RNA sequence: GGGAACGACUCGAGUAGAGUCGAAAACUGUUUCGUCAGCAGUCUCCUACGGUAGGUGUAUAACCAAUAAGGUUCUUGUACUAAGUGGCUCGGACAAUGAGGCCCUUCCGAAAGGAGAAGUUUGAACUAUGUUCCAUGUCUUCGGACAUGGAACAUAAAAAGAAACAACAACAACAAC
Reactivity to 2A3 in 0.01 (KOAc 150mM, MgCl2 10mM, bicine 150mM(pH8.5), 24C), signal-to-noise 3, nucleotides 027 to 126: c070u000g010u020u010u020c060g000u030c000a000g000c010a080g210u030c000u000c000c000u010a000c000g010g010u020a000g040g020u070g020u060a070u030a100a000c000c020a070a170u180a070a070g000g000u030u070c070u050u040g090u010a260c050u110a250a260g130u240g190g050c010u010c030g000g000a030c050a050a110u130g020a030g000g040c000c000c000u010u000c000c000g000a080a040a020g010g000a000g000a030a000g040u050u090u120g020a020a020c000
Reactivity to DMS in 0.01 (KOAc 150mM, MgCl2 10mM, bicine 150mM(pH8.5), 24C), signal-to-noise 1, nucleotides 027 to 126: c030u000g050u000u010u000c020g000u040c000a040g050c070a050g000u000c000u000c000c000u000a210c010g060g020u000a030g000g000u000g000u070a070u100a100a160c000c000a010a180u000a300a010g000g000u000u000c000u020u000g000u000a020c040u080a260a090g120u040g000g020c000u000c020g000g000a070c060a020a090u040g020a180g040g000c030c030c020u000u000c010c000g000a100a130a120g050g030a010g070a060a060g000u000u010u000g030a070a020c120